[RMDB]
RNA sequence: GGGAACGACUCGAGUAGAGUCGAAAAAGUACUGUCCUUCGGGACAGUACUAAAAAACCUUUGUGGAUAAGACAUGAUGACUAGUGGACCCAUUGGGUCCCUAGCAUCAACAGCUUAUCCACUCUGGUAAAAAGUGUCCAUCUUCGGAUGGACACAACCUUCCAUAAUUGUUCGCAAUUAUGGAAGGAAAAGAAACAACAACAACAAC
Reactivity to 2A3 in 0.01 (KOAc 150mM, MgCl2 10mM, bicine 150mM(pH8.5), 24C), signal-to-noise 3, nucleotides 027 to 156: a000g000u000a000c000u000g000u010c010c020u040u100c260g000g020g000a000c000a000g000u000a000c000u000a000a000a000a000a000a000c010c000u000u010u030g000u010g020g000a000u000a000a000g030a040c030a090u040g000a000u020g120a220c000u020a020g030u200g130g000a010c030c030c140a300u090u300g060g000g000u000c000c010c000u000a000g000c000a010u000c000a000a000c010a010g010c000u000u000a000u000c000c000a000c000u000c000u000g000g000u030a030a160a010a070a000g000u000g020u000c000c000a020u000c000u030u040c230g150g000a000u000g000g000a000c000a000c000a000a000
Reactivity to DMS in 0.01 (KOAc 150mM, MgCl2 10mM, bicine 150mM(pH8.5), 24C), signal-to-noise 1, nucleotides 027 to 156: a040g020u000a010c020u000g000u010c000c000u000u020c300g000g010g010a020c000a000g000u010a000c010u020a000a020a160a120a030a020c000c010u010u000u000g030u000g000g010a040u010a020a020g000a110c110a300u000g010a070u000g000a130c000u000a030g020u000g200g000a020c000c000c000a300u060u000g060g060g000u000c000c040c010u000a010g010c010a050u000c000a010a060c080a140g000c010u010u000a000u000c010c000a000c010u020c020u010g030g050u000a010a170a220a160a060g020u010g000u000c000c000a000u000c000u000u010c300g030g010a000u010g010g000a020c000a000c040a000a040